[RMDB]
RNA sequence: GGGAACGACUCGAGUAGAGUCGAAAAGCGUAGCGAGAGGUGAAAGUUGACGACCUACGUAGGACAAACCGAAGCGAAAGCUGUCGUCCAGUACGUUUCCGGUGAUCAAGGACGUAAGCCGGAGGAGCGUUAGCCGAUCAUUCGUGAUCGGCUAACGAAAAGAAACAACAACAACAAC
Reactivity to DMS in 0.01 (KOAc 150mM, MgCl2 10mM, bicine 150mM(pH8.5), 24C), signal-to-noise 7, nucleotides 027 to 126: g010c030g020u000a100g010c050g010a140g000a100g010g010u010g000a080a080a110g020u020u000g010a130c070g000a150c220c020u020a050c050g010u000a080g000g010a060c070a080a080a120c100c070g020a090a030g010c000g000a120a090a160g010c000u000g000u010c120g010u000c010c010a130g000u010a080c080g010u000u000u000c020c000g000g000u010g000a100u020c060a070a170g000g010a120c120g000u010a120a270g010c010c010g000g010a080g000g000a090g000
Reactivity to 2A3 in 0.01 (KOAc 150mM, MgCl2 10mM, bicine 150mM(pH8.5), 24C), signal-to-noise 4, nucleotides 027 to 126: g040c020g020u060a000g010c010g060a040g020a030g090g080u090g040a080a030a070g060u090u070g060a040c000g030a040c010c030u050a020c040g030u060a050g040g000a010c040a080a060a000c070c050g040a030a000g000c000g060a040a000a000g000c010u010g030u030c030g010u000c000c020a050g100u060a040c040g010u000u110u010c030c000g000g040u040g020a110u170c080a150a150g170g010a030c080g040u070a020a010g010c000c010g000g020a020g010g080a070g010